RNA sequence: GGGAACGACUCGAGUAGAGUCGAAAAACGAUGCGGAUUGCUUCUUAUGCCCAGGCAAUACCCGGGUAACGGGUGACGUCAACCCUGACUACCGGUCAACCUAUGUAUUUACCAAUGACUUUGCCGCGCUGGCAAUCAAAUUCGUUUGAUUGCCAGCAAAAGAAACAACAACAACAAC
Reactivity to 2A3 in 0.01 (KOAc 150mM, MgCl2 10mM, bicine 150mM(pH8.5), 24C), signal-to-noise 2, nucleotides 027 to 126: a000c070g050a050u160g010c020g030g070a110u090u030g000c000u100u040c050u100u120a050u220g000c000c030c020a020g030g000c040a050a040u030a130c030c010c010g000g000g100u080a120a020c060g020g000g060u040g040a030c050g050u030c030a050a090c070c030c000u020g020a080c010u110a100c010c050g090g020u070c030a020a050c000c000u090a090u180g060u020a120u070u080u080a100c000c000a110a040u090g050a100c020u090u080u070g050c020c030g010c000
Reactivity to DMS in 0.01 (KOAc 150mM, MgCl2 10mM, bicine 150mM(pH8.5), 24C), signal-to-noise 2, nucleotides 027 to 126: a060c130g020a090u000g000c080g000g040a050u000u030g000c010u000u000c070u000u000a170u020g050c000c000c040a260g000g060c190a050a100u000a120c040c120c060g000g010g020u020a090a090c090g010g030g000u030g020a070c180g000u000c040a060a090c130c210c150u000g030a110c060u020a060c060c070g010g000u020c040a090a040c010c000u000a200u010g020u000a050u020u010u020a070c040c030a060a030u020g000a130c080u010u000u000g010c000c070g000c140